This 177-nucleotide RNA was probed chemically with DMS and 2A3. The reactions ran in a buffer of 150 mM KOAc, 10 mM MgCl2 and 150 mM bicine (pH 8.5), at 24 C.
RNA sequence: GGGAACGACUCGAGUAGAGUCGAAAAACUCAGCAACUACACUGUCGGUAUUGGCGACCUUGGCGUGACAGCCACAAGGUCAUUGAGGGUAUGGGCUGCACCGAGAGUGUUCACAGGCAACUAUACCCCAUUGCAUUAGUUUCGACUAAUGCAAUGGAAAAGAAACAACAACAACAAC
Reactivity to DMS in 0.01 (KOAc 150mM, MgCl2 10mM, bicine 150mM(pH8.5), 24C), signal-to-noise 8, nucleotides 027 to 126: a080c030u000c020a160g000c080a040a050c080u020a100c030a030c010u000g010u000c020g010g020u000a230u010u010g020g020c110g000a010c000c000u000u000g010g010c030g010u010g010a160c200a220g000c010c030a060c260a060a020g010g010u000c000a130u010u010g010a120g000g010g000u000a010u000g010g010g000c100u000g000c070a030c010c010g010a050g000a040g020u000g010u000u010c150a100c200a100g000g000c020a030a050c030u000a030u000a030c030c020
Reactivity to 2A3 in 0.01 (KOAc 150mM, MgCl2 10mM, bicine 150mM(pH8.5), 24C), signal-to-noise 7, nucleotides 027 to 126: a000c030u030c040a030g020c020a040a060c030u130a010c020a000c010u070g120u160c020g000g050u050a120u080u260g170g020c080g000a000c000c010u010u020g000g010c030g040u080g110a050c050a030g010c010c010a070c100a040a020g020g000u000c030a020u030u150g080a080g010g020g010u040a020u050g050g040g050c080u040g000c030a010c000c010g020a030g000a010g030u030g040u090u050c110a150c020a050g130g030c010a030a010c020u030a020u050a070c010c010